[RMDB]
Chemical mapping of a 177-nucleotide RNA with 2A3 and DMS.
RNA sequence: GGGAACGACUCGAGUAGAGUCGAAAAGAUAUGGAUGGCAAAGACAUGCUACUCAUCGGAAACGAUGAGAUAGCAACAGCUUUGGCCAUCCUAAGUCAAAUCUCUCAGCAGUUCGCUGCUGAGAGAACCAUCCUCUUAAGUUCGCUUAAGAGGAUGGAAAAGAAACAACAACAACAAC
Reactivity to 2A3 in 0.01 (KOAc 150mM, MgCl2 10mM, bicine 150mM(pH8.5), 24C), signal-to-noise 7, nucleotides 027 to 126: g000a000u020a000u060g000g000a000u000g000g010c010a000a010a010g030a110c140a200u300g000c000u000a010c000u000c000a010u010c010g000g000a020a010a000c020g000a010u010g000a010g000a010u010a000g000c000a030a090c090a050g000c010u020u010u090g130g060c000c000a000u000c000c000u000a000a000g000u000c010a120a080a200u020c000u000c000u000c000a000g000c000a010g000u080u260c290g070c220u000g000c000u000g000a000g000a000g000a000a010
Reactivity to DMS in 0.01 (KOAc 150mM, MgCl2 10mM, bicine 150mM(pH8.5), 24C), signal-to-noise 6, nucleotides 027 to 126: g000a020u000a050u010g000g000a010u000g010g000c010a010a010a010g010a040c080a170u010g020c000u000a000c000u000c000a000u000c000g010g000a020a010a040c000g010a010u000g000a010g000a070u000a000g010c000a110a110c250a180g010c000u000u000u000g010g010c000c000a000u000c000c000u000a000a070g000u000c010a120a130a150u000c000u000c000u000c010a010g010c000a010g020u010u010c300g030c010u010g000c000u000g000a010g000a000g000a010a080
About this RNA: 2A3 adducts were read by reverse transcription with SuperScript II with manganese. Conditions: 150 mM KOAc, 10 mM MgCl2 and 150 mM bicine (pH 8.5), 24 C. The data come from the RNA Mapping Database (RMDB), library TTRDES.